[RMDB]
RNA sequence: GGGAACGACUCGAGUAGAGUCGAAAAAAGCGUUCAACGACGACCGGCCCUUGAUCGACGCGUUUGGCACCCCGGGCAAGCUGACCGGUACCAAGGUGUACGGCUGGAAGUGGGAUCUUGCCAACCGGUCAGCUAAUUUGUUCGCAAAUUAGCUGACAAAAGAAACAACAACAACAAC
Reactivity to DMS in 0.01 (KOAc 150mM, MgCl2 10mM, bicine 150mM(pH8.5), 24C), signal-to-noise 3, nucleotides 027 to 126: a090a090g030c040g040u000u000c050a150a090c120g010a060c070g020a080c060c020g020g020c020c040c040u000u000g010a060u000c080g000a070c050g020c060g010u000u000u000g010g020c040a100c090c060c030c010g010g010g010c080a060a040g000c080u000g000a040c020c000g000g010u010a110c210c020a090a100g020g000u020g030u010a110c040g000g000c020u000g020g000a070a090g020u010g000g010g000a130u000c020u000u000g000c030c040a100a090c070c030g000
Reactivity to 2A3 in 0.01 (KOAc 150mM, MgCl2 10mM, bicine 150mM(pH8.5), 24C), signal-to-noise 1, nucleotides 027 to 126: a020a000g040c000g040u030u030c050a110a080c060g150a010c000g020a030c010c000g060g000c030c020c000u050u100g120a190u050c050g020a030c010g030c000g080u000u050u070g080g000c050a040c000c020c000c020g000g010g050c080a070a040g040c070u070g050a060c020c000g000g010u020a050c020c060a140a030g050g020u090g020u080a060c000g010g000c010u040g000g040a070a020g020u150g020g040g000a050u030c000u020u080g000c000c010a000a030c010c000g000

An RNA of 177 nucleotides, treated with DMS and 2A3 and read out base by base. 2A3 adducts were read by reverse transcription with SuperScript II with manganese. For DMS the reverse transcriptase was MarathonRT. The reactions ran in a buffer of 150 mM KOAc, 10 mM MgCl2 and 150 mM bicine (pH 8.5), at 24 C. The 2A3 profile rests on 1,396 reads. It was measured as part of the RMDB library OK2TRN.